[RMDB]
This 177-nucleotide RNA was probed chemically with DMS and 2A3. 2A3 adducts were read by reverse transcription with SuperScript II with manganese. For 2A3, 1,466 sequencing reads were counted. For DMS the reverse transcriptase was MarathonRT.
RNA sequence: GGGAACGACUCGAGUAGAGUCGAAAAGCUAUUGCCAUGGCCUGUGCGGCCGCUUGUUCCGCCUGCGCUGCCGCCGUGCUGAGCCAGGCUAGGUACUGGGUUGCGACGGCCAUCAUCGCCGCCGCGGUCACAGCUCAGACUUCGGUCUGAGCUGUGAAAAAGAAACAACAACAACAAC
Reactivity to DMS in 0.01 (KOAc 150mM, MgCl2 10mM, bicine 150mM(pH8.5), 24C), signal-to-noise 2, nucleotides 027 to 126: g020c030u010a050u020u020g020c080c000a090u000g010g000c030c000u000g010u000g030c010g000g000c020c220g000c020u020u010g000u000u030c040c010g050c030c050u010g000c100g000c070u000g000c060c300g050c030c050g040u010g020c020u000g010a190g010c050c000a060g020g000c010u000a040g010g000u030a060c050u000g000g010g000u000u020g000c040g000a010c050g010g000c000c110a070u000c240a080u030c300g000c000c010g020c000c010g000c010g010g000
Reactivity to 2A3 in 0.01 (KOAc 150mM, MgCl2 10mM, bicine 150mM(pH8.5), 24C), signal-to-noise 3, nucleotides 027 to 126: g080c040u110a070u300u290g030c030c030a170u030g000g000c000c000u060g030u050g030c000g010g000c000c010g010c030u040u100g030u170u050c020c000g050c010c050u160g020c070g000c030u070g030c000c000g000c000c000g040u060g040c010u030g050a010g040c000c000a000g070g050c030u010a060g000g000u130a060c090u050g080g040g030u100u140g040c020g010a020c010g030g000c080c000a000u070c000a020u100c010g000c010c030g030c000c000g020c000g060g000